Chemical mapping of a 207-nucleotide RNA with 2A3. Values cover nucleotides 27 to 156.

[RMDB]
RNA sequence: GGGAACGACUCGAGUAGAGUCGAAAACGAUCAGUACGUUCGCGUACUGAUCGAAGCUACUGGAGACAGUAGCAAGUCUAAGACCUUGUUAGGCGGAAACAAGGAAAAAUGGAGGAAGGCCGGACCUCCAUACUUAGACAACCGCCAACCGGCCUAAAUACUGGUAAUGCUUCGGCAUUACCAGUAUAAAAGAAACAACAACAACAAC
Reactivity to 2A3 in 0.01 (KOAc 150mM, MgCl2 10mM, bicine 150mM(pH8.5), 24C), signal-to-noise 1, nucleotides 027 to 156: c010g000a000u000c000a000g010u000a000c020g000u060u040c250g040c000g080u000a000c000u000g000a000u000c000g000a010a000g000c010u000a000c000u000g000g020a040g000a030c000a000g000u000a000g030c000a000a020g010u000c010u020a020a050g030a180c000c000u030u010g010u020u080a160g000g140c140g040g070a070a020a000c010a030a000g010g070a110a040a080a000a000u020g000g030a010g040g060a080a190g030g000c050c010g070g050a300c010c010u010c000c000a000u010a000c000u010u000a000g000a000c020a070a070c120c080g110c030c000a010a030c010c010g000g010c000c000u010a030a030
Source information
Conditions: 150 mM KOAc, 10 mM MgCl2 and 150 mM bicine (pH 8.5), 24 C. For 2A3 the reverse transcriptase was SuperScript II with manganese.